Annotation
The record gives the reactivity of an RNA of 177 nucleotides to 2A3 and DMS.

RNA sequence: GGGAACGACUCGAGUAGAGUCGAAAAGUUGAGAGCGUUUAACUUAAGUCUUUUUUAUUAGCUUAAAAAAACUAUAUACAAGUGGUGGUAGUCCGCCACUCUAAGGGGACGCCUUUAGAAGAAGAGGCGCAUAGUGCCUAUUCGUAGGCACUAUGCGAAAAGAAACAACAACAACAAC
Reactivity to 2A3 in 0.01 (KOAc 150mM, MgCl2 10mM, bicine 150mM(pH8.5), 24C), signal-to-noise 3, nucleotides 027 to 126: g110u100u120g050a050g000a030g070c030g030u040u040u050a070a080c010u040u040a060a020g080u140c090u000u090u050u030u010u030a090u050u150a050g030c030u000u030a000a000a010a000a000a010a000c100u110a160u030a020u040a220c080a090a010g000u010g020g000u010g030g050u060a050g100u080c010c000g010c010c010a010c010u000c000u000a040a030g030g000g010g020a030c020g040c030c000u080u070u080a140g030a140a020g030a030a010g060a080g040g060
Reactivity to DMS in 0.01 (KOAc 150mM, MgCl2 10mM, bicine 150mM(pH8.5), 24C), signal-to-noise 2, nucleotides 027 to 126: g000u020u000g000a030g000a140g000c110g030u000u000u030a070a050c030u000u000a120a060g000u010c000u000u000u010u010u080u040a040u000u000a030g000c030u000u000a000a000a020a050a010a000a030c000u000a030u070a070u060a080c150a070a070g000u000g000g020u010g000g000u070a080g040u050c000c000g030c000c000a000c000u000c030u000a070a060g000g020g010g020a010c210g010c000c000u020u000u000a070g000a050a080g000a040a030g020a070g000g000
The reactions ran in a buffer of 150 mM KOAc, 10 mM MgCl2 and 150 mM bicine (pH 8.5), at 24 C. For DMS the reverse transcriptase was MarathonRT.